This 207-nucleotide RNA was probed chemically with 2A3. For 2A3 the reverse transcriptase was SuperScript II with manganese.
RNA sequence: GGGAACGACUCGAGUAGAGUCGAAAAUACCCUACUCCGACUCAAUACGUCCCCGUCGUACAGAAUCGUAACAUAUCUCUCCAAAUAUCUGAGCUUGGGUAUACGGGGAAACCCAACCCCUUGGGAAAAAAGCCCCUCGUGUUCGCACGAGGGGCAAGAGCAAAUAUAUGUUCGCAUAUAUUUGCUCAAAAGAAACAACAACAACAAC
Reactivity to 2A3 in 0.01 (KOAc 150mM, MgCl2 10mM, bicine 150mM(pH8.5), 24C), signal-to-noise 1, nucleotides 027 to 156: u060a000c000c000c020u010a030c020u010c010c090g090a040c040u040c080a040a030u100a070c020g030u020c010c010c000c000g040u010c010g060u060a090c060a070g100a010a050u060c020g000u100a060a040c020a110u180a110u060c050u010c010u060c050c010a050a120a140u100a100u110c070u120g020a020g060c040u030u060g010g000g020u040a040u010a050c050g000g000g000g050a020a000a010c020c000c010a000a030c020c000c000c010u020u130g000g040g050a020a160a020a070a110a020g000c000c000c000c000u000c000g000u020g050u110u050c100g010c100a000c000g000a000g000g010g020g010c000a020a000
The RNA was probed in 150 mM KOAc, 10 mM MgCl2 and 150 mM bicine (pH 8.5) at 24 C. The data come from the RNA Mapping Database (RMDB), library M2RFPK. Values cover nucleotides 27 to 156.